[RMDB]
RNA sequence: GGGAACGACUCGAGUAGAGUCGAAAAUCAAAAAUGCAACAAAACGUCGUUAAAUCUGUGAUCUUGGAUACACUUAAAAACACCCACAUUGCGGGUUCUACGACCUCGGUUGAUGAUAUCAAUGUGCCUAAAGUUGACAUCACGGCGCCUGCCCCACCUGUGUGUCAUAUUUCGAUAUGACACACAGAAAAGAAACAACAACAACAAC
Reactivity to 2A3 in 0.01 (KOAc 150mM, MgCl2 10mM, bicine 150mM(pH8.5), 24C), signal-to-noise 4, nucleotides 027 to 156: u100c030a040a050a050a050a030u120g030c030a050a030c010a020a200a030a030c030g030u020c000g030u050u080a030a050a040u020c010u030g040u060g060a020u000c060u070u090g030g000a030u100a110c120a040c080u150u200a120a080a010a030a060c050a030c020c020c010a020c040a060u010u060g010c010g000g010g010u020u000c020u030a000c010g000a010c000c020u040c060g080g000u030u040g030a070u030g020a020u010a020u130c070a050a040u050g040u070g070c020c010u110a120a070a050g060u060u040g080a030c010a030u060c030a020c030g030g010c020g030c010c010u060g010c020c020c000c000a040c010
Reactivity to DMS in 0.01 (KOAc 150mM, MgCl2 10mM, bicine 150mM(pH8.5), 24C), signal-to-noise 1, nucleotides 027 to 156: u000c050a050a050a050a100a120u000g020c060a040a130c000a050a130a120a160c070g000u000c040g010u000u000a040a080a030u000c040u010g040u030g000a010u000c040u000u020g080g010a060u000a090c090a080c080u010u020a040a080a130a100a080c070a060c000c000c000a040c280a070u000u000g000c050g020g040g010u000u000c010u000a050c030g000a030c000c060u010c030g010g000u000u010g010a090u000g010a010u000a080u010c000a010a060u000g000u000g010c060c060u000a050a070a140g010u000u010g030a070c000a040u000c020a020c090g000g050c010g030c020c020u000g010c020c000c010c030a100c300